[RMDB]
RNA sequence: GGGAACGACUCGAGUAGAGUCGAAAAGACCCCCGUUGGGAAGCGAAGACCCUGUGGAGCUUUACUGCAGCCUGCCGUUGCUCCACAGCUGGGGGUGCGCAGGGUAGGCGGGAGGCUUCGAAGCCCCUAGGAGAUAAAUCUUCGGAUUUAUCUCCUAAAAAGAAACAACAACAACAAC
Reactivity to DMS in 0.01 (KOAc 150mM, MgCl2 10mM, bicine 150mM(pH8.5), 24C), signal-to-noise 6, nucleotides 027 to 126: g000a130c020c010c010c020c020g020u010u020g010g010g000a120a090g010c090g010a120a120g000a120c000c030c000u020g020u000g000g000a020g000c010u040u030u030a040c070u020g000c050a130g010c170c130u020g020c000c070g000u010u010g010c010u000c000c000a020c000a010g010c130u030g010g000g010g000g020u010g010c070g010c060a140g010g000g020u020a120g010g010c040g010g000g010a110g010g010c020u000u010c080g000a110a120g010c010c000c010c140
Reactivity to 2A3 in 0.01 (KOAc 150mM, MgCl2 10mM, bicine 150mM(pH8.5), 24C), signal-to-noise 7, nucleotides 027 to 126: g080a010c000c000c000c000c010g070u100u140g060g040g110a110a030g070c050g040a050a020g090a100c010c000c000u020g000u000g010g000a000g010c010u110u170u150a060c020u070g020c010a080g200c030c120u120g000c000c030g030u030u040g000c000u000c000c010a000c000a000g000c020u050g010g000g000g010g030u060g040c030g000c030a030g080g070g030u090a030g010g030c040g000g010g010a070g010g000c020u060u060c070g060a090a020g020c000c000c000c000